This 207-nucleotide RNA was probed chemically with DMS and 2A3. Values cover nucleotides 27 to 156. It was measured as part of the RMDB library OK3TST. The DMS profile rests on 2,460 reads. For 2A3, 1,687 sequencing reads were counted. For DMS the reverse transcriptase was MarathonRT.
RNA sequence: GGGAACGACUCGAGUAGAGUCGAAAAAGCGUAGCGAUCGAGAACAUUGCGCGCAAGAUUUACAACAAGCAAGAGAAGGCGGUGAGAGCCGCUCUAAGCGCUUAUUACGGUGUAAGUGAUGCAAUGGAGUGCGUGAACCGAGUAACCCGCGCCGUUGCUUCCUACUGGAAUUCGUUCCAGUAGGAAGAAAAGAAACAACAACAACAAC
Reactivity to DMS in 0.01 (KOAc 150mM, MgCl2 10mM, bicine 150mM(pH8.5), 24C), signal-to-noise 2, nucleotides 027 to 156: a190g030c020g000u000a150g050c010g000a130u020c000g020a220g000a140a260c070a060u030u000g020c000g030c030g010c000a150a140g000a150u000u000u000a090c070a080a100c000a100a050g010c030a090a100g040a180g020a100a080g000g020c000g010g060u000g030a280g000a220g000c000c000g000c000u000c040u000a050a160g000c080g020c040u030u000a060u000u000a040c050g000g000u020g000u000a020a100g040u000g000a100u000g030c000a060a060u020g040g000a090g050u000g020c050g020u000g000a110a300c080c010g030a040g020u010a110a120c000c010c000g000c070g000c010c010g020u000u000g000
Reactivity to 2A3 in 0.01 (KOAc 150mM, MgCl2 10mM, bicine 150mM(pH8.5), 24C), signal-to-noise 3, nucleotides 027 to 156: a010g000c020g010u070a040g000c010g010a040u060c080g020a040g020a200a030c050a050u030u030g000c020g010c010g000c010a020a010g070a080u100u120u160a100c070a150a020c050a080a010g070c010a080a030g050a020g070a250a040g020g030c020g060g000u060g030a120g010a010g010c010c010g020c000u000c020u040a110a060g050c030g020c040u050u030a030u060u090a080c030g000g000u020g010u050a030a080g030u060g080a100u120g000c010a000a050u060g040g000a070g050u120g010c010g010u070g040a020a030c050c010g030a040g020u040a030a080c040c030c050g000c010g010c050c020g040u030u040g010